[RMDB]
RNA sequence: GGGAACGACUCGAGUAGAGUCGAAAAGACGUAAUCCGCGCAAAUCCACAAACGCCAACGAUGAGCGUUUCGCUGUAGCCGCUUAAGGCAACAGCCGGGGCCGCCUGGGCCCUGUUACCAAAGACGGGAAACUCGAUGCCAUUCGUGGCAUCGAGAAUACGAUACUUUUGUUCGCAAAAGUAUCGUAAAAAGAAACAACAACAACAAC
Reactivity to DMS in 0.01 (KOAc 150mM, MgCl2 10mM, bicine 150mM(pH8.5), 24C), signal-to-noise 1, nucleotides 027 to 156: g010a090c070g030u010a100a120u010c070c070g060c020g030c030a060a060a110u000c020c060a200c040a010a220a050c010g000c000c040a100a100c060g020a120u060g000a210g010c000g000u000u000u000c000g000c050u000g010u010a110g040c000c010g000c140u000u000a070a260g030g020c030a090a040c010a020g020c040c020g000g000g040g000c010c020g040c140c090u000g020g050g010c000c010c020u000g000u000u000a040c070c010a000a130a140g000a140c020g010g000g000a110a080a180c000u000c030g040a010u000g040c020c010a090u000u040c270g040u000g010g020c000a000u000c000g000a020g010a050a090
Reactivity to 2A3 in 0.01 (KOAc 150mM, MgCl2 10mM, bicine 150mM(pH8.5), 24C), signal-to-noise 4, nucleotides 027 to 156: g030a010c010g030u060a050a090u060c040c040g020c010g000c060a050a110a100u090c080c030a110c080a100a010a010c050g010c010c010a130a060c120g130a160u180g030a050g060c010g000u020u050u080c050g000c000u000g000u030a070g020c000c000g100c200u230u290a150a070g000g010c000a010a000c000a010g000c000c000g000g000g000g000c010c000g040c010c030u030g000g000g000c000c000c000u010g020u030u060a010c020c010a020a020a000g130a040c010g020g000g000a020a050a040c000u000c000g000a000u000g000c000c000a030u070u070c220g060u090g000g000c000a000u000c000g000a000g000a000a000
Chemical mapping of a 207-nucleotide RNA with DMS and 2A3. 2A3 adducts were read by reverse transcription with SuperScript II with manganese. DMS (dimethyl sulfate) methylates the pairing face of unpaired adenines and cytosines. Conditions: 150 mM KOAc, 10 mM MgCl2 and 150 mM bicine (pH 8.5), 24 C. Reactivities are given for positions 27 through 156.